Source: RMDB library M2PK90, as collected in RNAgym. An RNA of 177 nucleotides, treated with 2A3 and DMS and read out base by base. The DMS profile rests on 1,634 reads. The reactions ran in a buffer of 150 mM KOAc, 10 mM MgCl2 and 150 mM bicine (pH 8.5), at 24 C. Reactivities are given for positions 27 through 126. For 2A3 the reverse transcriptase was SuperScript II with manganese. DMS adducts were read by reverse transcription with MarathonRT.
RNA sequence: GGGAACGACUCGAGUAGAGUCGAAAAGACAAUAGCGUAGGGAUCCAAGCAAAGAGGUAAGAAAUCCCACGGUAGAAGGCUUGGUUCUAGCCGUGGGAAGAAGAAGUCCCACUCCCUACGCCGAUAAGAGUAUACAACGGUUCGCCGUUGUAUACUCAAAAGAAACAACAACAACAAC
Reactivity to 2A3 in 0.01 (KOAc 150mM, MgCl2 10mM, bicine 150mM(pH8.5), 24C), signal-to-noise 2, nucleotides 027 to 126: g080a020c040a060a140u060a140g000c000g000u010a010g000g000g000a010u010c000c000a020a000g010c020a000a130a040g180a150g050g020u170a210a080g100a150a180a020u000c000c020c000a000c000g000g000u070a090g050a300a000g050g000c010u010u040g010g000u080u060c100u120a040g030c000c000g000u000g020g020g010a000a000g010a000a000g010a000a010g010u010c020c000c000a010c000u010c010c000c000u000a010c000g000c000c000g000a000u050a160a080
Reactivity to DMS in 0.01 (KOAc 150mM, MgCl2 10mM, bicine 150mM(pH8.5), 24C), signal-to-noise 2, nucleotides 027 to 126: g020a170c160a080a080u020a080g000c010g040u000a010g010g000g000a040u000c000c010a030a050g000c030a210a150a130g000a110g030g040u010a030a080g000a120a120a110u000c010c000c000a000c000g000g030u000a030g010a010a010g000g010c030u000u020g010g000u000u000c100u000a060g010c000c000g020u010g040g000g030a000a010g010a080a050g010a140a100g000u010c000c000c050a300c060u000c000c020c010u000a000c010g000c000c110g000a120u010a030a080